[RMDB]
RNA sequence: GGGAACGACUCGAGUAGAGUCGAAAACAACUGUUAUCUUGCCACUGCAUUGUUAACACUCCAACAAAUAGAGUUGAAGUUUAAUCCACCUGCUCUACAAAGGGCUGGUGAAGCUGCUUACUUUUGUCGACUACAAACUUCGGUUUGUAGAAAAGAAACAACAACAACAAC
Reactivity to DMS in 0.01 (KOAc 150mM, MgCl2 10mM, bicine 150mM(pH8.5), 24C), signal-to-noise 6, nucleotides 027 to 129: c110a080a080c220u030g010u040u020a090u010c070u020u050g030c050c190a090c150u000g040c070a100u000u000g030u040u020a060a030c080a070c120u030c020c060a000a000c140a040a140a150u130a130g050a000g000u000u000g030a050a040g030u000u000u000a110a160u000c000c030a000c010c010u030g000c030u020c000u000a130c300a090a120a070g000g000g000c040u020g040g000u030g020a040a100g000c120u000g030c060u050u020a040c080u020u030u010u040g020u060c120g010a230
Reactivity to 2A3 in 0.01 (KOAc 150mM, MgCl2 10mM, bicine 150mM(pH8.5), 24C), signal-to-noise 9, nucleotides 027 to 129: c020a000a010c040u040g010u110u060a120u050c040u040u080g020c000c060a140c130u150g000c010a050u040u080g060u060u040a040a010c020a000c050u030c030c020a040a020c040a030a210a080u260a060g100a010g030u030u140g070a040a020g010u030u070u160a040a050u040c020c000a010c000c010u020g000c000u000c000u040a120c090a060a220a110g000g020g000c000u010g000g000u000g000a000a010g020c040u040g020c020u050u050a080c010u070u050u020u090g110u070c060g040a050